[RMDB]
RNA sequence: GGGAACGACUCGAGUAGAGUCGAAAAUGAGAAUUUCGAUGGAUGUUACGAUAAUCUCUAUAUCGCCACCAGCCAUGUUGGUAUUGAUCAUGGCAUCGGGGCGCGCCUGUACAGUGCCGGUAAUGGCGUUACGAUGUGAGUUCGCUCACAUCGUAACAAAAGAAACAACAACAACAAC
Reactivity to DMS in 0.01 (KOAc 150mM, MgCl2 10mM, bicine 150mM(pH8.5), 24C), signal-to-noise 4, nucleotides 027 to 126: u010g010a050g010a080a100u000u010u010c030g020a170u010g030g000a150u020g010u000u020a130c040g000a030u010a060a070u000c020u000c010u000a140u020a060u000c020g010c010c000a050c010c000a110g000c000c000a010u010g010u000u000g000g010u000a140u010u010g000a070u000c020a000u000g010g000c010a040u010c180g010g000g000g020c020g020c290g010c010c010u000g020u010a070c180a090g000u010g010c010c010g000g010u000a070a090u010g000g000c060
Reactivity to 2A3 in 0.01 (KOAc 150mM, MgCl2 10mM, bicine 150mM(pH8.5), 24C), signal-to-noise 4, nucleotides 027 to 126: u130g000a020g010a080a110u060u030u030c070g050a080u170g220g120a050u140g080u260u180a070c010g000a030u030a080a100u030c020u000c010u010a050u030a040u250c010g020c000c000a080c020c000a010g000c000c000a010u050g000u070u060g180g110u230a180u100u280g070a040u040c000a020u010g030g000c010a010u080c120g030g000g000g000c010g020c010g030c000c000u040g000u060a070c050a060g050u020g050c000c010g000g090u140a130a080u220g040g000c000